[RMDB]
RNA sequence: GGGAACGACUCGAGUAGAGUCGAAAACAAGACCCACAGCCUAGAAACGGAAGCUCUGGGCUUCCAGUAUGGGGUUCCUACGGUGGGUGUUGAUGGGAUAUAGAGGCAGACCCCCUGCCCAGGUCAGGGUACGCGAUCUAUUCGUAGAUCGCGUACCAAAAGAAACAACAACAACAAC
Reactivity to DMS in 0.01 (KOAc 150mM, MgCl2 10mM, bicine 150mM(pH8.5), 24C), signal-to-noise 2, nucleotides 027 to 126: c080a110a040g010a080c000c000c010a040c050a150g000c000c010u000a110g000a100a150a080c150g020g010a030a000g000c010u010c300u010g010g000g020c000u000u000c000c020a060g000u020a040u000g000g000g000g020u030u000c070c060u000a120c170g020g040u000g000g000g020u000g000u000u010g000a070u000g050g000g000a100u010a120u000a140g030a150g010g000c000a030g000a270c110c010c000c040c010u000g010c020c000c020a100g000g000u000c120a080g000

This 177-nucleotide RNA was probed chemically with DMS. DMS adducts were read by reverse transcription with MarathonRT. Values cover nucleotides 27 to 126.